[RMDB]
The record gives the reactivity of an RNA of 177 nucleotides to DMS.
RNA sequence: GGGAACGACUCGAGUAGAGUCGAAAAAACACUGUGUAGGAUAGGUGGGAGGCUUUGUAGUGUGGACGCCAGUCUGCAUGGAGCCGACCUUGAAAUACCACCCUUUAAUGAAGAAAAACAAAGCCAACAGCCUAUUAUUCUUCGGAAUAAUAGGCUGAAAAGAAACAACAACAACAAC
Reactivity to DMS in 0.01 (KOAc 150mM, MgCl2 10mM, bicine 150mM(pH8.5), 24C), signal-to-noise 2, nucleotides 027 to 126: a050a040c090a070c130u000g020u010g010u000a050g010g000a130u010a020g010g030u000g010g000g000a270g010g000c000u000u000u000g010u010a100g050u000g020u020g010g020a020c020g000c250c230a130g000u000c000u000g010c000a030u000g010g010a050g000c010c000g000a060c120c070u000u000g000a080a070a090u000a050c020c020a030c000c000c010u000u000u000a100a110u000g010a070a130g010a050a050a010a090a080c060a050a030a040g010c050c090a090a180